[RMDB]
RNA sequence: GGGAACGACUCGAGUAGAGUCGAAAACAGACUCGAGCGAAAGCUCGGCGAAAGCCGCGUACAUGUGAAUGUCGGCGCGUGUACAGUCGACAGUUACUCUUCGGAGUAACAAUAGAAACAACAACAACACGACCAUAAUGUUCGCAUUAUGGUCGUGAAAAGAAACAACAACAACAAC
Reactivity to 2A3 in 0.01 (KOAc 150mM, MgCl2 10mM, bicine 150mM(pH8.5), 24C), signal-to-noise 4, nucleotides 027 to 126: c050a010g040a030c010u010c000g000a000g000c000g060a060a010a010g000c000u000c000g010g000c000g060a190a090a000g170c070c010g000c000g010u010a000c000a010u020g010u030g060a200a100u190g070u110c070g050g020c010g000c000g000u030g000u000a010c030a010g000u000c010g010a010c050a060g000u000u000a000c000u010c000u010u080c270g080g000a000g000u000a000a000c010a000a010u170a060g110a080a140a020c100a020a000c000a020a030c010a000a010
Reactivity to DMS in 0.01 (KOAc 150mM, MgCl2 10mM, bicine 150mM(pH8.5), 24C), signal-to-noise 2, nucleotides 027 to 126: c070a180g030a030c040u000c020g040a000g000c000g000a150a060a090g000c000u000c000g020g010c020g000a120a090a130g050c200c060g000c000g080u000a000c050a000u030g020u030g010a210a040u000g000u000c060g000g000c030g020c000g000u000g010u010a000c010a050g000u000c000g050a090c210a090g000u010u010a000c000u000c000u000u020c140g000g000a010g000u010a000a080c020a130a050u050a050g000a010a080a060c110a000a030c090a040a070c190a050a110

Conditions: 150 mM KOAc, 10 mM MgCl2 and 150 mM bicine (pH 8.5), 24 C. The record gives the reactivity of an RNA of 177 nucleotides to 2A3 and DMS. For DMS, 2,113 sequencing reads were counted.